[RMDB]
RNA sequence: GGGAACGACUCGAGUAGAGUCGAAAAUGCGAAUCAGGCGACACAUCCAAAUUGCGGGAAACUCCUUAGAGCUCUAGCUACCGCGGCCCCAUCGUGAGAUUAGGGUGCAGCACCAGGUUAAUGGCCUCGGGUAUGGUAAAAACGCUAGAGAUUGGACGGACAAAUACAUCUUCGGAUGUAUUUGUCCAAAAGAAACAACAACAACAAC
Reactivity to 2A3 in 0.01 (KOAc 150mM, MgCl2 10mM, bicine 150mM(pH8.5), 24C), signal-to-noise 2, nucleotides 027 to 156: u120g030c020g050a020a020u110c030a060g030g100c030g090a020c020a000c000a130u060c040c030a050a090a130u110u150g030c030g030g020g000a070a090a060c040u070c000c000u060u060a040g000a000g110c000u000c000u000a010g030c000u000a000c000c010g000c000g020g000c000c000c000c030a020u030c030g060u050g080a120g010a030u060u160a110g010g000g000u050g050c010a000g010c010a000c000c000a010g030g010u020u040a130a030u120g010g010c010c020u010c090g020g000g020u130a280u100g010g000u010a010a040a020a000a000c000g000c000u000a000g000a000g000a010u020u070g030g000a050c080

This 207-nucleotide RNA was probed chemically with 2A3. The RNA was probed in 150 mM KOAc, 10 mM MgCl2 and 150 mM bicine (pH 8.5) at 24 C. 2A3 adducts were read by reverse transcription with SuperScript II with manganese.